[RMDB]
RNA sequence: GGGAACGACUCGAGUAGAGUCGAAAACCAGAUGACGGUCCUGCCAUGAGACCGCAACGAGAGCAUGUCCCAUCGAAUGGACUCGGGGAGUCGGCAGCUUGCCCCACGGAUGAGCGCCUAAUGCCGGAAGAGACGUGCAACUUCGGUUGCACGUCAACCUAGUAAAGACCUUCGGGUCUUUACUAGGAAAAGAAACAACAACAACAAC
Reactivity to 2A3 in 0.01 (KOAc 150mM, MgCl2 10mM, bicine 150mM(pH8.5), 24C), signal-to-noise 2, nucleotides 027 to 156: c000c000a010g070a130u140g000a010c050g000g000u050c040c000u090g180c090c050a100u150g040a090g010a110c010c020g000c020a050a050c060g140a000g000a030g170c030a030u100g060u010c030c000c000a080u140c080g040a050a100u050g010g040a020c050u030c070g000g000g020g030a070g110u050c010g020g030c000a000g010c070u030u070g040c000c030c010c040a020c060g060g000a080u070g050a030g020c040g040c000c020u050a080a010u110g050c000c020g000g070a080a000g100a020g000a020c000g000u000g000c000a000a000c000u050u010c060g210g000u010u020g000c010a000c010g010u000c000a000a000
Reactivity to DMS in 0.01 (KOAc 150mM, MgCl2 10mM, bicine 150mM(pH8.5), 24C), signal-to-noise 1, nucleotides 027 to 156: c000c000a140g000a120u010g000a110c050g000g000u000c010c000u000g060c040c170a170u000g010a040g000a000c030c020g020c000a010a090c070g000a100g000a050g000c040a140u000g000u000c030c000c010a150u000c110g010a110a070u000g000g020a090c120u020c030g000g010g010g000a050g020u010c010g000g080c010a080g010c080u000u000g020c000c010c050c060a160c110g010g000a100u000g000a050g000c070g000c050c040u000a070a070u040g000c000c030g000g000a090a170g010a300g010a030c000g000u000g010c010a010a000c010u000u000c270g120g060u000u010g010c000a020c000g000u000c000a010a030